[RMDB]
RNA sequence: GGGAACGACUCGAGUAGAGUCGAAAAGAUAUGGAGUCGUAACAAGCGCUCCCUGUAUCGGAAACGAUACACCAGAACUACGCUUGCCCGACUCCUAAGUCAAAACACUGCCCUUCGGGGCAGUGAACUAAAUGUAUCUGUUCGCAGAUACAUUUAGAAAAGAAACAACAACAACAAC
Reactivity to DMS in 0.01 (KOAc 150mM, MgCl2 10mM, bicine 150mM(pH8.5), 24C), signal-to-noise 7, nucleotides 027 to 126: g010a030u000a300u000g010g000a010g010u000c010g010u000a120a180c010a010a010g010c010g000c100u010c070c080c100u000g000u000a010u000c000g010g010a140a080a180c000g010a010u000a000c000a030c150c140a090g000a060a070c090u010a100c010g010c000u000u000g010c130c180c020g000a020c000u000c000c000u000a010a070g000u000c030a090a080a110a170c010a010c000u000g010c000c000c000u000u000c200g030g010g000g010c000a000g000u000g000a030a170
Reactivity to 2A3 in 0.01 (KOAc 150mM, MgCl2 10mM, bicine 150mM(pH8.5), 24C), signal-to-noise 4, nucleotides 027 to 126: g040a010u060a040u150g000g000a010g010u010c010g020u050a110a060c010a010a010g000c060g020c050u040c010c000c000u020g010u010a000u010c000g020g000a040a030a030c020g000a000u010a000c010a010c020c080a050g050a140a060c160u300a060c230g010c010u010u010g000c040c020c010g000a010c000u000c000c000u000a080a020g010u000c010a000a010a070a110c010a000c000u010g000c010c000c000u030u040c300g010g010g000g000c000a000g000u000g000a010a010